[RMDB]
RNA sequence: GGGAACGACUCGAGUAGAGUCGAAAAGACGCCUUUAGAAGAAGAGGCUAGGGGUUAUUCCGGUGUGGGAUACUUAGUAAUAUGCAACGCUAAUUGCAUAAGAUUGUAGGACGGAAUUUACAGUCUUUAGAGAUAAGCACGUUCGCGUGCUUAUCAAUCGUUAAUGAGGAUUCGUCCUCAUUAACGAAAAAGAAACAACAACAACAAC
Reactivity to 2A3 in 0.01 (KOAc 150mM, MgCl2 10mM, bicine 150mM(pH8.5), 24C), signal-to-noise 9, nucleotides 027 to 156: g040a010c040g020c000c020u060u050u090a180g030a260a020g030a050a010g010a050g030g000c030u030a020g020g020g000g010u050u080a080u140u060c050c020g030g050u210g020u130g050g020g010a040u040a120c040u060u080a050g030u070a070a090u040a040u090g000c000a020a020c070g020c190u130a120a070u080u020g000c000a010u010a050a020g040a050u050u080g020u030a010g010g040a010c050g030g040a040a020u090u090u080a070c040a020g010u000c000u030u080u080a120g030a000g000a070u000a000a000g000c000a000c010g010u030u050c160g010c000g080u000g000c000u000u000a000u000c000a000a010
Reactivity to DMS in 0.01 (KOAc 150mM, MgCl2 10mM, bicine 150mM(pH8.5), 24C), signal-to-noise 4, nucleotides 027 to 156: g010a140c120g020c010c020u000u000u010a080g010a130a170g000a110a100g010a090g000g010c000u000a100g020g010g020g010u010u010a110u010u020c060c030g020g040u000g020u000g010g010g000a140u010a080c110u000u010a120g000u000a080a160u000a050u000g010c010a040a030c070g010c180u000a060a120u000u000g000c000a050u010a020a070g010a100u010u000g010u000a050g020g010a140c020g010g010a080a220u000u010u000a020c030a090g010u000c020u000u000u010a120g020a210g010a020u000a000a010g000c000a000c000g030u000u010c300g040c010g050u000g000c000u010u000a000u000c010a050a060